[RMDB]
RNA sequence: GGGAACGACUCGAGUAGAGUCGAAAAUAUACAGCGAAACCACUGCUAGGGGAACGGGCCUAGCAAAAACAGCGGGGAAAGAAGACCCUGUUGAGCUUGACUCUAGUCUGAUAUUGCAUAGUGACCUCCAUCAGGCACAAUUCGUUGUGCCUGAUGGAAAAGAAACAACAACAACAAC
Reactivity to 2A3 in 0.01 (KOAc 150mM, MgCl2 10mM, bicine 150mM(pH8.5), 24C), signal-to-noise 2, nucleotides 027 to 126: u160a010u010a020c030a010g000c020g050a080a070a000c080c060a040c080u030g030c000u020a010g000g020g030g110a050a060c060g140g070g000c020c010u040a010g000c010a050a000a000a000a030c000a000g000c070g030g000g030g030a060a300a120g300a050a060g080a110c000c000c020u000g000u030u010g040a040g000c020u040u000g080a070c000u000c050u110a040g090u020c070u030g070a080u110a100u160u090g050c110a010u060a110g030u030g040a040c000c020u000